[RMDB]
RNA sequence: GGGAACGACUCGAGUAGAGUCGAAAAAGUUAGAGGCAAUUUGAAAUAAUUUAAAUUAGCUCAACCCUACUGCACUUACCGAACUAGAUAACGGUGUAGUAGGGGUAAAUUCUCCGCAUUCGGUGCGCAACCACCUGAGGUUUCGACCUCAGGUGAACAUUUUAAUACGAUUCGUCGUAUUAAAAUGAAAAGAAACAACAACAACAAC
Reactivity to DMS in 0.01 (KOAc 150mM, MgCl2 10mM, bicine 150mM(pH8.5), 24C), signal-to-noise 2, nucleotides 027 to 156: a160g000u000u000a060g010a130g020g040c010a010a040u000u000u000g000a020a070a180u000a110a160u000u000u000a020a010a060u000u010a120g010c020u010c020a080a050c000c000c000u000a010c000u000g000c000a010c000u010u000a100c060c000g020a150a210c210u000a160g030a110u010a040a030c140g000g040u000g000u000a000g010u000a000g020g000g000g000u000a000a030a090u000u000c000u010c050c070g000c090a190u000u000c140g000g060u000g030c010g000c110a070a150c090c000a000c000c010u000g010a020g000g000u000u000u000c300g000a040c030c010u000c010a000g010g010u000g000a020a070
Reactivity to 2A3 in 0.01 (KOAc 150mM, MgCl2 10mM, bicine 150mM(pH8.5), 24C), signal-to-noise 4, nucleotides 027 to 156: a000g060u080u060a060g010a050g060g040c020a010a030u010u040u030g080a070a120a140u280a120a260u130u110u090a040a030a030u030u030a060g000c000u000c030a020a020c000c000c000u000a000c000u010g010c000a010c010u040u060a030c050c020g050a100a020c040u030a090g060a170u130a220a030c100g000g000u000g000u000a000g000u000a000g000g000g010g000u000a000a000a000u020u000c030u000c010c020g000c010a030u040u050c040g110g000u020g000c030g000c030a070a090c050c000a000c000c000u000g000a010g020g030u030u080u170c190g070a060c000c000u000c000a000g000g000u000g000a000a000